[RMDB]
Annotation:
The record gives the reactivity of an RNA of 177 nucleotides to DMS and 2A3. For 2A3, 4,748 sequencing reads were counted. Conditions: 150 mM KOAc, 10 mM MgCl2 and 150 mM bicine (pH 8.5), 24 C.
RNA sequence: GGGAACGACUCGAGUAGAGUCGAAAAGAUAUGGAGAACAGGGAGAGUUAAUGACGAAUUCGGAAACGAACUAUCAUUUACUCGAAGAACUGUUCUCCUAAGUCAAACGGAGGGUUCGCCCUCCGAACAUCUUCACAAACUUCGGUUUGUGAAGAUGAAAAGAAACAACAACAACAAC
Reactivity to DMS in 0.01 (KOAc 150mM, MgCl2 10mM, bicine 150mM(pH8.5), 24C), signal-to-noise 3, nucleotides 027 to 126: g010a040u000a300u010g000g000a020g010a020a000c000a000g000g010g010a140g000a020g030u000u000a020a000u000g020a000c110g010a040a150u000u000c000g000g000a090a070a180c000g000a020a040c100u020a290u000c000a000u000u000u000a000c000u000c010g000a090a120g000a100a090c010u000g000u020u000c000u000c000c000u000a020a060g000u000c020a100a150a170c030g020g000a020g010g000g010u000u020c290g020c010c000c000u000c010c000g000a030a070
Reactivity to 2A3 in 0.01 (KOAc 150mM, MgCl2 10mM, bicine 150mM(pH8.5), 24C), signal-to-noise 3, nucleotides 027 to 126: g030a020u050a030u160g000g010a000g000a000a000c010a010g030g000g000a030g030a000g000u010u040a010a020u010g010a000c150g140a260a300u080u020c010g010g020a070a050a050c000g020a020a010c050u040a030u040c000a000u000u020u080a010c010u020c000g020a300a030g020a010a010c000u000g010u010u000c000u000c000c000u020a010a000g010u000c040a040a050a080c030g000g010a000g020g030g010u100u130c300g190c040c020c000u010c000c010g000a000a000